RNA sequence: GGGAACGACUCGAGUAGAGUCGAAAAUUUACAGAGCCAAUUUGGCAUCCUGGCCGCCUCCAAACGCUUGUGGGCGCCAAGUCAGAAGAAUUGGUAUAUAUGGAGGUGGACAGAAUGCCAAAAUGGCGAUGCCGACCUAAUUCGUUAGGUCGGCAUCAAAAGAAACAACAACAACAAC
Reactivity to DMS in 0.01 (KOAc 150mM, MgCl2 10mM, bicine 150mM(pH8.5), 24C), signal-to-noise 4, nucleotides 027 to 126: u030u020u030a120c130a130g020a200g010c000c000a000a050u000u010u000g000g000c000a010u000c030c010u010g000g020c010c010g010c000c000u040c000c000a030a130a150c140g030c010u000u040g020u050g040g000g020c020g040c000c020a010a010g000u010c020a200g040a160a120g010a020a050u000u000g010g040u010a120u010a120u010a100u000g000g010a010g000g010u000g000g000a010c010a000g000a020a010u010g000c000c000a000a010a020a050u000g000g000c010
Reactivity to 2A3 in 0.01 (KOAc 150mM, MgCl2 10mM, bicine 150mM(pH8.5), 24C), signal-to-noise 9, nucleotides 027 to 126: u180u170u110a150c100a060g110a020g050c010c010a020a040u000u000u000g000g000c000a000u010c010c000u000g010g010c000c000g000c000c000u000c000c000a070a080a080c040g020c030u130u160g090u260g280g100g010c010g000c000c000a010a000g060u070c040a040g090a300a020g020a150a140u010u010g010g030u050a080u030a030u020a050u270g000g000a000g000g000u010g000g000a000c000a000g000a000a000u020g000c000c010a000a000a000a000u010g000g010c010